An RNA of 177 nucleotides, treated with 2A3 and DMS and read out base by base.
The 2A3 profile rests on 21,039 reads.
[RMDB]
RNA sequence: GGGAACGACUCGAGUAGAGUCGAAAAGAUAUGGAGUUGUCCAGACAUGAAGAUAAUUCGGAAACGAAUUAAUUUCAACAGCUGGCAACUCCUAAGUCAAACACCCAUAACUUCGGUUAUGGGUGAACUUAUACUUAACGUUCGCGUUAAGUAUAAGAAAAGAAACAACAACAACAAC
Reactivity to 2A3 in 0.01 (KOAc 150mM, MgCl2 10mM, bicine 150mM(pH8.5), 24C), signal-to-noise 7, nucleotides 027 to 126: g010a000u020a010u050g000g000a000g000u010u020g160u210c060c000a010g020a030c130a300u300g010a010a000g020a050u020a020a010u010u000c000g000g000a010a000a000c010g000a010a000u010u010a020a030u020u020u020c230a300a240c070a210g000c010u000g000g010c000a000a000c000u000c000c000u000a000a000g010u010c000a010a140a080c000a000c000c000c000a000u000a010a010c010u050u120c300g200g000u010u000a000u000g000g020g010u000g000a000a000
Reactivity to DMS in 0.01 (KOAc 150mM, MgCl2 10mM, bicine 150mM(pH8.5), 24C), signal-to-noise 6, nucleotides 027 to 126: g000a010u000a030u010g000g010a020g020u000u000g010u020c010c010a000g010a030c140a180u020g010a010a010g010a100u000a010a010u000u000c000g020g000a010a010a030c000g010a020a010u000u000a010a060u010u000u000c000a120a100c250a160g010c000u000g000g000c000a010a000c010u000c000c000u000a000a040g000u000c000a190a160a300c010a000c000c010c000a010u000a000a010c000u000u010c260g030g010u000u000a000u000g010g010g010u000g010a000a040
Background: For 2A3 the reverse transcriptase was SuperScript II with manganese. In probing experiments dimethyl sulfate is read out at A N1 and C N3, which are open when not base-paired. It was measured as part of the RMDB library TTRDES. For DMS, 12,902 sequencing reads were counted. Values cover nucleotides 27 to 126. For DMS the reverse transcriptase was MarathonRT.